RNA sequence: GGGAACGACUCGAGUAGAGUCGAAAAGAAACGUAAAGCUGGAGUGCUGACCAAAAACACAACGCCAAUCAGUGAUGAUGAAAUGGUGGAAAGCGGACAGCAUCAGUAACGAAAGUAUUUAGCGGGCAUGAAAAUGGCAAAUAACGGUCAAACAUCGCUAGCAACUAUCGUUCGCGAUAGUUGCUAGAAAAGAAACAACAACAACAAC
Reactivity to 2A3 in 0.01 (KOAc 150mM, MgCl2 10mM, bicine 150mM(pH8.5), 24C), signal-to-noise 2, nucleotides 027 to 156: g010a000a000a000c040g010u110a110a000a020g000c040u060g070g050a130g060u070g020c000u030g040a120c030c030a110a020a020a030a080c150a030c020a090a000c020g000c000c000a000a030u010c000a000g110u090g120a100u090g010a010u000g030a010a050a090u140g000g010u010g030g030a100a160a000g050c080g020g020a000c000a010g010c000a020u070c010a060g000u040a000a040c030g020a120a050a130g040u030a060u090u030u000a060g020c050g070g000g000c010a000u060g040a030a000a000a030u070g060g000c000a000a000a120u150a030a020c130g010g000u080c020a010a120a000c010a060u130c030g020
Conditions: 150 mM KOAc, 10 mM MgCl2 and 150 mM bicine (pH 8.5), 24 C. An RNA of 207 nucleotides, treated with 2A3 and read out base by base. Source: RMDB library OK3TST, as collected in RNAgym. Reactivities are given for positions 27 through 156.